[RMDB]
RNA sequence: GGGAACGACUCGAGUAGAGUCGAAAAGCUCAUUACUUCGGUAAUGAGCAAAUAAAUUCAGCGGUAAAACCUCCGCAAAUAUUACCGCUGAUGCGGAGCUUAAAACAGCUAGGUUCGCCUAGCUGAACCAACUCUAAGGUUUCGACCUUAGAGUUGGAAAAGAAACAACAACAACAAC
Reactivity to DMS in 0.01 (KOAc 150mM, MgCl2 10mM, bicine 150mM(pH8.5), 24C), signal-to-noise 1, nucleotides 027 to 126: g010c030u010c000a000u010u010a000c000u000u020c180g040g030u000a000a000u000g000a000g010c000a020a030a020u000a090a080a060u000u000c030a000g000c000g000g010u000a010a000a110a090c130c150u000c070c100g050c060a040a120a080u010a070u010u000a010c010c000g010c000u000g000a000u010g000c200g020g000a080g020c260u010u010a020a090a100a150c000a000g010c000u000a010g000g040u000u020c180g000c010c020u000a000g000c010u000g000a020a070
Reactivity to 2A3 in 0.01 (KOAc 150mM, MgCl2 10mM, bicine 150mM(pH8.5), 24C), signal-to-noise 2, nucleotides 027 to 126: g000c000u010c000a000u010u010a000c000u010u070c170g060g000u010a020a000u000g000a000g020c000a000a010a010u020a010a040a010u080u010c000a000g000c000g010g020u030a020a050a120a110c030c070u050c060c070g060c020a010a080a010u140a020u020u020a020c000c010g000c010u020g010a000u020g010c060g090g090a100g020c040u140u160a020a040a070a060c000a000g020c000u000a010g040g000u000u070c170g070c060c000u010a010g000c000u010g000a000a010